[RMDB]
RNA sequence: GGGAACGACUCGAGUAGAGUCGAAAAGAUAUGGAAGCGUUCGGUGAACUACUCGUCUCGGAAACGAGCGAGCACCGAGACGCUUCCUAAGUCAAACGCCAUGGUAACCUUCGGGUUACCAUGGCAACCCUCAUUGUUAGUUCGCUAACAAUGAGGGAAAAGAAACAACAACAACAAC
Reactivity to 2A3 in 0.01 (KOAc 150mM, MgCl2 10mM, bicine 150mM(pH8.5), 24C), signal-to-noise 3, nucleotides 027 to 126: g010a010u070a020u180g000g000a000a000g000c020g000u010u020c010g050g010u020g030a100a080c050u160a050c010u300c060g300u160c030u000c040g020g040a120a070a050c000g000a000g010c000g020a010g000c000a000c000c030g010a020g010a000c000g000c000u000u000c000c000u010a030a000g020u020c020a070a080a140c170g000c010c000a000u010g000g020u010a010a010c020c050u090u190c300g040g000g000u000u000a000c000c000a000u010g000g000c000a010a000
Reactivity to DMS in 0.01 (KOAc 150mM, MgCl2 10mM, bicine 150mM(pH8.5), 24C), signal-to-noise 3, nucleotides 027 to 126: g000a040u000a300u000g000g010a010a020g010c010g000u000u000c000g010g010u000g000a060a050c030u020a300c010u000c000g010u020c000u000c100g000g000a110a100a180c000g010a000g000c030g010a000g000c010a010c000c000g000a030g000a000c000g000c010u000u000c000c000u000a010a080g000u000c020a090a090a110c200g000c000c010a010u000g000g010u000a000a020c000c000u010u010c190g040g020g010u000u000a000c000c000a000u000g000g000c000a000a000

This 177-nucleotide RNA was probed chemically with 2A3 and DMS. For 2A3, 5,979 sequencing reads were counted. Reactivities are given for positions 27 through 126. It was measured as part of the RMDB library TTRDEL. Values are in units of 0.01, from 0 to 300, in steps of 10. 2A3 adducts were read by reverse transcription with SuperScript II with manganese.